About this RNA: Source: RMDB library OK1LIB, as collected in RNAgym. This 177-nucleotide RNA was probed chemically with 2A3 and DMS.
RNA sequence: GGGAACGACUCGAGUAGAGUCGAAAAGAAAGAAACAUCACCCUAUGGAAAAGAAAGGCAGCCACACAAGAAACCUGAGGAAACAGGAAGCCACAACGUGCGCCAUGUGGUUAGCAAAGGGAGAAAAAUUACCUACUGACUUCGGUCAGUAGGUAAUAAAAGAAACAACAACAACAAC
Reactivity to 2A3 in 0.01 (KOAc 150mM, MgCl2 10mM, bicine 150mM(pH8.5), 24C), signal-to-noise 3, nucleotides 027 to 126: g100a010a090a000g070a030a120a010c040a090u080c020a080c020c000c000u050a090u100g110g040a070a090a080a040g090a060a040a010g050g000c000a000g000c000c000a010c000a010c010a100a040g060a110a040a040c000c000u000g010a040g060g220a180a060a030c010a000g030g000a030a000g040c020c000a010c040a150a130c090g060u070g000c040g020c020c010a010u040g000u010g000g000u000u020a030g000c020a010a040a010g010g050g000a050g130a030a080a010a000
Reactivity to DMS in 0.01 (KOAc 150mM, MgCl2 10mM, bicine 150mM(pH8.5), 24C), signal-to-noise 4, nucleotides 027 to 126: g020a120a140a080g020a190a080a050c080a070u010c040a100c010c020c020u000a130u030g000g030a110a120a110a040g020a090a110a110g000g010c040a070g000c000c010a040c040a040c210a110a060g000a120a080a120c010c010u000g020a140g020g020a120a090a090c030a050g000g030a110a080g010c010c010a030c040a100a120c210g000u000g000c090g040c020c130a060u000g010u000g000g010u020u000a090g010c010a030a040a050g010g010g000a050g020a040a040a030a080
2A3 adducts were read by reverse transcription with SuperScript II with manganese.